[RMDB]
RNA sequence: GGGAACGACUCGAGUAGAGUCGAAAAGAUGGGGCAGGUGGGAAUAUACCUCGCCACCCACUUGCUCCUGAUUGAGAGAUAGACGGCGAGGGUCCGAUCAUACGAUAUAUUCCUGCUCAGCGUAUGAUCGGUUAUGAUACUUAAGACGAGCAGGCUAACGGACUGAUGAUUUCGAUCAUCAGUCCGUAAAAGAAACAACAACAACAAC
Reactivity to 2A3 in 0.01 (KOAc 150mM, MgCl2 10mM, bicine 150mM(pH8.5), 24C), signal-to-noise 2, nucleotides 027 to 156: g130a080u100g000g000g000g000c000a000g010g000u040g170g000g020a090a000u200a000u070a210c000c000u000c000g000c000c000a020c000c000c000a020c010u010u000g000c000u000c010c040u000g050a080u110u210g130a080g010a030g020a030u150a180g160a070c030g010g000c000g020a000g010g000g000u020c000c000g000a000u000c000a000u000a000c000g000a020u050a020u020a000u250u120c000c030u000g030c020u000c000a050g010c000g000u000a020u000g000a000u000c020g000g020u010u020a000u000g000a000u050a150c160u260u170a090a030g220a080c040g000a000g000c000a000g000g020c000u060a020